Source information:
Structure probing data (DMS and 2A3) for a 177-nucleotide construct. The 2A3 profile rests on 3,805 reads. Source: RMDB library TTRDES, as collected in RNAgym.
RNA sequence: GGGAACGACUCGAGUAGAGUCGAAAAAAAAGAUAUGGAACACUGGGAGGACCUAACCUACCCACCUUACAUCGGAAACGAUGUAAGAGGGUUAUUGGUCCGAAGAACAGUGUUCCUAAGUCAAAAACAUGGUAAUUCAGUUCGCUGAAUUACCAUGAAAAGAAACAACAACAACAAC
Reactivity to DMS in 0.01 (KOAc 150mM, MgCl2 10mM, bicine 150mM(pH8.5), 24C), signal-to-noise 3, nucleotides 027 to 126: a090a010a070a040g000a090u020a300u010g000g010a000a000c010a010c000u000g000g000g000a060g020g020a010c000c010u020a020a000c000c050u000a080c030c010c010a300c110c000u000u000a000c000a000u000c000g020g000a150a030a230c000g010a020u000g010u000a000a000g000a150g000g000g000u000u000a040u030u030g040g000u000c000c000g010a040a060g020a090a160c010a010g010u000g000u000u000c000c010u000a000a080g000u000c050a090a100a100a130a210
Reactivity to 2A3 in 0.01 (KOAc 150mM, MgCl2 10mM, bicine 150mM(pH8.5), 24C), signal-to-noise 2, nucleotides 027 to 126: a010a010a020a020g160a080u250a060u230g000g010a000a000c000a000c000u000g000g000g010a020g040g000a000c000c000u000a020a010c000c000u150a270c010c030c010a040c030c010u020u000a000c000a010u000c010g000g010a080a100a030c010g010a020u000g000u000a000a000g000a000g010g010g000u030u060a170u240u260g020g000u000c010c000g090a100a010g020a000a000c000a010g010u000g000u000u010c000c000u000a000a000g020u000c040a080a030a210a090a050